[RMDB]
RNA sequence: GGGAACGACUCGAGUAGAGUCGAAAAUACGACGUAUUCGUACGUCGUAAAGGAACGAAAGUACAAAGGAGCAAAAGCAUGAGCUCCUAAAAAUCAUGCAAAACACGAGCCGAUUCGUCGGCUCGAAAGUAUUACCUAGCUUCGGCUAGGUAAUACUAAAAGAAACAACAACAACAAC
Reactivity to DMS in 0.01 (KOAc 150mM, MgCl2 10mM, bicine 150mM(pH8.5), 24C), signal-to-noise 2, nucleotides 027 to 126: u000a000c000g010a020c000g020u000a060u030u000c280g000u000a000c010g000u000c000g040u000a020a110a070g010g020a110a050c050g010a120a100a170g010u000a110c110a070a160a110g000g000a010g000c010a140a070a100a200g010c020a000u000g000a060g010c000u000c000c000u020a000a020a030a010a040u000c010a000u000g000c020a110a090a100a100c190a110c000g030a000g000c000c000g030a010u000u010c250g040u000c020g010g000c000u000c000g000a000a030
Reactivity to 2A3 in 0.01 (KOAc 150mM, MgCl2 10mM, bicine 150mM(pH8.5), 24C), signal-to-noise 2, nucleotides 027 to 126: u040a000c000g000a000c000g000u000a020u020u120c190g010u030a020c020g000u010c010g000u000a020a020a010g070g050a080a020c040g050a150a040a040g090u130a070c040a150a170a080g010g000a020g010c010a040a170a140a000g020c000a010u010g020a000g020c010u010c020c020u030a020a010a000a000a000u010c000a000u000g000c020a080a040a060a000c130a000c020g000a000g000c000c000g010a010u050u050c150g080u010c000g120g000c010u010c000g000a000a010

Structure probing data (DMS and 2A3) for a 177-nucleotide construct. 2A3 adducts were read by reverse transcription with SuperScript II with manganese. For 2A3, 3,122 sequencing reads were counted. The RNA was probed in 150 mM KOAc, 10 mM MgCl2 and 150 mM bicine (pH 8.5) at 24 C. Reactivities are given for positions 27 through 126.